Source: RMDB library TTRINS, as collected in RNAgym. Structure probing data (DMS) for a 177-nucleotide construct. DMS adducts were read by reverse transcription with MarathonRT. The RNA was probed in 150 mM KOAc, 10 mM MgCl2 and 150 mM bicine (pH 8.5) at 24 C. High DMS reactivity at an A or C suggests that its Watson-Crick edge is free.

[RMDB]
RNA sequence: GGGAACGACUCGAGUAGAGUCGAAAAGAUAUGGAUGUUUGAACUCUUAUUGUGUAGACAUGAAGGUUUCGUGUCGGAAACGACACACUUCAACAGCUACCAAUAAGAGUUCAAACAUCCUAAGUCAGUUGUGUAUCUACUUCGGUAGAUACACAACAAAAGAAACAACAACAACAAC
Reactivity to DMS in 0.01 (KOAc 150mM, MgCl2 10mM, bicine 150mM(pH8.5), 24C), signal-to-noise 2, nucleotides 027 to 126: g010a030u010a300u010g000g000a000u000g020u000u000u000g000a000a010c000u000c000u000u000a010u000u000g010u010g010u000a020g000a050c120a290u000g000a020a020g010g000u000u020u010c260g020u010g020u000c010g000g000a080a090a210c000g030a000c000a010c000a050c010u000u000c000a040a080c280a160g010c000u000a020c000c010a010a010u000a000a000g000a000g010u000u000c000a000a020a000c000a000u000c000c000u000a010a070g010u000c030a140